[RMDB]
RNA sequence: GGGAACGACUCGAGUAGAGUCGAAAAGUGUAAAUAGAGGAGUCAGGGGUCGCACCCGCUCCGCGAACCUAGGGUAACACUGACUGUGGAGCGCAAGAGAUAGCGAGAGAGAACUCGCUAUCAGCAAAGGCAUAAUGACUUUCGAGUCAUUAUGCCUAAAAGAAACAACAACAACAAC
Reactivity to 2A3 in 0.01 (KOAc 150mM, MgCl2 10mM, bicine 150mM(pH8.5), 24C), signal-to-noise 2, nucleotides 027 to 126: g030u030g030u150a040a080a110u120a110g100a070g020g060a020g050u050c110a110g050g010g010g000u070c010g000c050a070c010c000c000g030c020u010c000c020g000c000g030a060a030c000c010u060a010g020g020g060u060a050a000c000a000c000u040g060a000c020u160g000u050g090g010a040g000c000g010c060a070a030g020a000g020a120u000a000g000c000g000a000g010a000g040a010g000a120a050c000u000c000g000c020u000a000u010c000a000g000c020a010a140
Reactivity to DMS in 0.01 (KOAc 150mM, MgCl2 10mM, bicine 150mM(pH8.5), 24C), signal-to-noise 3, nucleotides 027 to 126: g000u000g000u040a060a160a060u010a100g020a090g000g000a060g010u000c120a130g010g000g010g000u000c260g000c220a230c010c050c020g030c010u000c020c000g000c140g010a130a110c070c050u000a070g000g010g000u010a080a070c030a060c020u000g000a090c060u010g010u000g000g000a110g000c090g000c130a070a060g010a130g000a000u010a000g000c000g000a020g000a180g020a190g000a150a130c010u000c020g000c000u000a000u000c000a070g040c110a040a070